The data come from the RNA Mapping Database (RMDB), library OK2TST. The record gives the reactivity of an RNA of 177 nucleotides to 2A3 and DMS. DMS adducts were read by reverse transcription with MarathonRT. The reactions ran in a buffer of 150 mM KOAc, 10 mM MgCl2 and 150 mM bicine (pH 8.5), at 24 C. Reactivities are given for positions 27 through 126. In probing experiments dimethyl sulfate is read out at A N1 and C N3, which are open when not base-paired.
[RMDB]
RNA sequence: GGGAACGACUCGAGUAGAGUCGAAAAGGGCCUCCCCGCAAGAGUAGACGCAGUCUGGGACAGAGAGCAUGUCCAGGUGGGACAACUUGCCGGUCCUAAACAUGGCAGAUGCCAGCUCGUUGACCUGGAUAAGGGAGGGAUUCGUCCCUCCCUUAUCAAAAGAAACAACAACAACAAC
Reactivity to 2A3 in 0.01 (KOAc 150mM, MgCl2 10mM, bicine 150mM(pH8.5), 24C), signal-to-noise 2, nucleotides 027 to 126: g030g020g040c000c010u000c010c010c000c000g020c040a040a020g030a050g120u140a020g020a020c040g010c140a030g020u000c030u030g040g000g030a020c040a030g160a020g010a030g110c060a050u050g020u020c020c010a020g070g080u110g050g050g030a000c000a060a070c040u030u090g060c020c010g020g000u020c000c000u030a070a070a010c060a070u070g030g010c030a020g030a290u170g050c010c000a010g010c000u010c020g010u020u040g080a110c000c020u020g060
Reactivity to DMS in 0.01 (KOAc 150mM, MgCl2 10mM, bicine 150mM(pH8.5), 24C), signal-to-noise 5, nucleotides 027 to 126: g000g010g010c020c030u000c020c010c010c070g020c150a070a070g010a100g020u000a100g010a090c070g020c130a090g010u000c030u000g010g000g010a060c040a040g010a150g000a110g010c070a090u000g010u000c010c020a170g020g030u010g020g010g000a030c020a030a110c100u000u010g000c010c050g000g000u000c010c020u000a040a050a080c090a080u010g010g000c050a120g010a150u010g020c020c020a050g020c030u000c040g000u000u000g010a110c070c040u010g000